[RMDB]
RNA sequence: GGGAACGACUCGAGUAGAGUCGAAAAAGGUUCAUUCAUGAAGAAGACACAAUACAGUUACAAGUGCAGGUAAUAGGUUUAAAUCAACUUGAAAGCAAGUCAAUUGAGGCAAAACUGUCUAGUGCAAAAGCAAAAGAAACCAAGAUAAAAGUUGGUACGUAUCAACUCGGUUCGCCGAGUUGAUACGAAAAGAAACAACAACAACAAC
Reactivity to 2A3 in 0.01 (KOAc 150mM, MgCl2 10mM, bicine 150mM(pH8.5), 24C), signal-to-noise 1, nucleotides 027 to 156: a000g110g000u070u010c080a160u040u060c060a080u190g040a000a060g040a040a090g020a010c020a000c020a090a040u120a060c000a000g000u060u050a030c040a190a010g040u090g040c000a000g030g040u060a150a040u020a090g010g090u000u040u180a020a050a000u020c010a010a090c050u000u080g060a000a070a000g090c000a000a000g000u090c020a010a020u000u140g000a020g100g010c040a000a000a000a240c060u030g000u090c040u100a060g030u000g000c000a000a000a000a200g000c000a020a020a020a020g080a020a030a000c050c000a000a000g050a060u150a100a100a000a000g010u040u050g030g000u030a010